An RNA of 177 nucleotides, treated with DMS and 2A3 and read out base by base.
For 2A3 the reverse transcriptase was SuperScript II with manganese.
It was measured as part of the RMDB library RFM100.
RNA sequence: GGGAACGACUCGAGUAGAGUCGAAAAGCCCGCCAAGAAGCGACCCCUCCGGGGCGAGCUGAGCGGCGUGCGGCGGGGUGUCAUCCGUCAGUUCUCCUAGUGACGCAGGCAGUGCGACCUUGUACGCCGGCUGAAGUGUGUUCGCACACUUCAGCCGAAAAGAAACAACAACAACAAC
Reactivity to DMS in 0.01 (KOAc 150mM, MgCl2 10mM, bicine 150mM(pH8.5), 24C), signal-to-noise 2, nucleotides 027 to 126: g010c000c000c030g030c010c000a110a220g020a100a080g000c010g010a300c300c000c000c000u020c140c080g000g030g000g020c010g010a300g010c010u000g000a150g020c250g020g000c010g010u000g000c080g000g070c000g000g000g030g000u000g020u040c030a030u000c200c020g000u020c000a110g030u020u000c010u000c040c070u000a150g020u010g000a030c070g060c080a070g010g000c000a090g000u010g030c010g020a080c030c010u000u000g000u010a100c060g010c050
Reactivity to 2A3 in 0.01 (KOAc 150mM, MgCl2 10mM, bicine 150mM(pH8.5), 24C), signal-to-noise 2, nucleotides 027 to 126: g020c020c010c050g010c000c000a100a090g160a100a010g000c000g030a040c000c000c000c010u000c050c150g020g000g050g000c000g010a010g010c020u030g000a030g040c030g000g010c010g000u020g000c020g000g000c000g000g000g000g000u070g040u030c050a090u020c020c010g000u010c040a020g020u030u010c090u050c030c010u050a040g070u040g060a000c000g020c020a000g050g000c020a010g030u040g070c000g040a060c000c000u070u160g060u060a060c060g020c040